[RMDB]
RNA sequence: GGGAACGACUCGAGUAGAGUCGAAAAGAAAGAGUUGACUAGGACAGCAUCCCUUUCCUCAAAGGGCUCCUAGACUAGGGAGAGGGCCGGACAUCUGAAUACAUCCUGAGGAGACAGUGUGGGACAGAACCUUCCGAAAGUUCGCUUUCGGAAGGUUAAAAGAAACAACAACAACAAC
Reactivity to DMS in 0.01 (KOAc 150mM, MgCl2 10mM, bicine 150mM(pH8.5), 24C), signal-to-noise 1, nucleotides 027 to 126: g020a050a070a060g000a100g000u000u010g030a070c030u020a120g000g000a110c120a040g000c110a110u000c020c010c000u000u000u010c080c030u010c140a030a040a030g000g000g030c130u000c030c000u000a040g010a080c060u000a140g000g020g000a100g000a110g000g010g000c080c080g020g030a020c060a070u000c040u020g000a080a080u020a040c130a040u020c020c050u000g000a100g020g000a180g000a070c100a050g010u000g000u000g000g000g020a140c090a150g020
Structure probing data (DMS) for a 177-nucleotide construct.
The DMS profile rests on 1,020 reads.
It was measured as part of the RMDB library OK2TRN.
Reactivities are given for positions 27 through 126.